[RMDB]
RNA sequence: GGGAACGACUCGAGUAGAGUCGAAAAGAAACAGCCAGGAGGUGGGACUAUCCCUCACCGGUGCAGUUUGGAGCCUGGAUGGUGCAAUAGAGAUACGGAACCAUCUGGCAUGUGCCUUAAAUGAACAUCUCAGGCUUAUUUUCGAAUAAGCCUGAGAAAAAGAAACAACAACAACAAC
Reactivity to DMS in 0.01 (KOAc 150mM, MgCl2 10mM, bicine 150mM(pH8.5), 24C), signal-to-noise 1, nucleotides 027 to 126: g000a130a070a080c000a130g000c000c040a060g020g040a090g040g020u000g000g000g000a230c180u010a070u000c000c040c020u000c030a040c020c030g020g040u000g110c020a000g000u010u030u000g050g000a200g040c120c010u020g000g000a020u010g020g040u000g030c300a300a120u000a060g000a070g020a090u010a020c210g000g000a300a000c010c000a030u020c020u000g000g000c030a040u010g050u000g010c100c000u010u010a060a080a020u000g030a040a040c290a110